[RMDB]
Source: RMDB library RFM100, as collected in RNAgym.
This 177-nucleotide RNA was probed chemically with DMS and 2A3.
For 2A3 the reverse transcriptase was SuperScript II with manganese.
The RNA was probed in 150 mM KOAc, 10 mM MgCl2 and 150 mM bicine (pH 8.5) at 24 C.

RNA sequence: GGGAACGACUCGAGUAGAGUCGAAAAAGCGUAAGGGGCUACAUUGUGAAGGUUGGUGACCUACCGUGAUGAACUGAAAAAGAUUCAAAGUAGCGGUUUGAGCGAUGUGUAUAGACAGUAACCCGGUGAUCGCCUUUGUAUUCGUACAAAGGCGAUCAAAAGAAACAACAACAACAAC
Reactivity to DMS in 0.01 (KOAc 150mM, MgCl2 10mM, bicine 150mM(pH8.5), 24C), signal-to-noise 1, nucleotides 027 to 126: a080g030c080g000u110a090a120g050g010g030g000c020u000a040c000a080u000u000g030u000g000a030a010g000g030u000u020g020g000u000g000a050c000c000u020a060c000c020g000u000g010a300u000g000a100a030c080u000g000a050a180a160a280a030g000a070u000u000c060a030a200a300g010u000a130g040c040g010g000u000u000u080g000a050g080c090g000a020u000g010u030g050u020a090u020a100g000a110c300a070g000u020a010a090c020c000c000g000g020u000
Reactivity to 2A3 in 0.01 (KOAc 150mM, MgCl2 10mM, bicine 150mM(pH8.5), 24C), signal-to-noise 1, nucleotides 027 to 126: a000g060c070g000u140a010a030g000g000g000g030c000u040a000c030a020u050u050g000u000g000a000a000g000g020u180u080g000g090u010g130a000c010c000u000a030c000c000g010u000g000a110u000g000a000a000c030u030g020a300a000a000a000a000g270a280u020u010c000a090a130a040g040u030a020g080c000g000g000u040u000u030g010a000g000c000g000a000u000g020u000g080u060a000u030a030g040a040c000a000g000u300a180a200c000c000c000g030g000u000